Overview:
The record gives the reactivity of an RNA of 177 nucleotides to 2A3 and DMS. It was measured as part of the RMDB library M2PK90. For 2A3 the reverse transcriptase was SuperScript II with manganese. Conditions: 150 mM KOAc, 10 mM MgCl2 and 150 mM bicine (pH 8.5), 24 C.
RNA sequence: GGGAACGACUCGAGUAGAGUCGAAAAAAAAAGAAGAUAGCGAAAGCUAGAAAAGAUCCGUGGCUAAACAGGAAACUGAAGAGAGGUGCUCGGCUGAGAAGCCGUGCCACGGAAGCAGCUCAAAAAACAUCAAUACAUUGUUCGCAAUGUAUUGAUGAAAAGAAACAACAACAACAAC
Reactivity to 2A3 in 0.01 (KOAc 150mM, MgCl2 10mM, bicine 150mM(pH8.5), 24C), signal-to-noise 2, nucleotides 027 to 126: a000a000a000a000a000g070a040a020g020a030u040a010g000c010g050a160a030a020g000c020u020a010g140a010a100a000a010g040a010u000c000c000g020u000g010g000c030u060a100a110a020c030a070g100g050a130a080a040c080u100g110a240a020g140a040g020a020g150g020u050g060c030u010c040g000g000c000u020g010a020g010a070a020g010c000c000g010u010g000c010c010a000c000g010g000a000a000g010c020a010g040c000u040c070a050a070a010a010a010a040
Reactivity to DMS in 0.01 (KOAc 150mM, MgCl2 10mM, bicine 150mM(pH8.5), 24C), signal-to-noise 4, nucleotides 027 to 126: a040a050a050a090a060g000a140a110g000a130u000a000g010c010g000a100a060a110g010c000u010a020g000a100a060a100a100g000a060u000c010c010g020u000g000g000c020u000a070a070a090c140a040g000g000a080a060a080c110u010g000a060a070g000a130g000a040g010g010u000g020c050u000c020g000g010c000u000g000a180g000a110a030g010c000c000g010u000g000c000c000a000c010g010g000a020a040g010c050a040g010c060u010c040a000a030a050a060a060a100